[RMDB]
RNA sequence: GGGAACGACUCGAGUAGAGUCGAAAACUGCGGAGCCACACUCGUCUGGGAUGACUCAGAAGCAGCAGUUCUGCCCACGGUGGGUUUCGGCCCCACAGUAACAAGGGAAGCGACAGUACGCUGCAUGCGUAGUCUGGAAGUUCGCUUCCAGACUACGAAAAGAAACAACAACAACAAC
Reactivity to 2A3 in 0.01 (KOAc 150mM, MgCl2 10mM, bicine 150mM(pH8.5), 24C), signal-to-noise 4, nucleotides 027 to 126: c020u020g020c010g020g010a020g000c010c010a060c000a000c060u060c030g050u040c060u050g000g000g050a090u150g080a090c010u020c060a060g030a220a060g070c080a020g020c010a010g020u070u050c020u150g080c000c000c010a020c040g010g000u020g000g000g000u010u070u110c050g050g010c010c010c000c000a020c000a010g060u060a080a050c050a120a120g130g020g040a080a020g030c000g080a050c020a070g030u100a030c060g020c040u070g050c050a060u130g020
Reactivity to DMS in 0.01 (KOAc 150mM, MgCl2 10mM, bicine 150mM(pH8.5), 24C), signal-to-noise 4, nucleotides 027 to 126: c010u000g010c040g000g010a030g000c020c020a100c200a060c030u000c040g010u000c040u010g000g010g010a180u010g000a070c090u010c050a110g020a110a120g020c150a060g030c120a060g020u000u010c050u010g000c010c000c000a040c150g020g010u010g000g010g000u000u000u000c160g020g000c050c010c000c010a030c020a040g000u000a080a080c190a100a100g020g000g000a080a040g000c040g000a080c060a070g020u000a060c040g010c010u000g020c130a100u000g010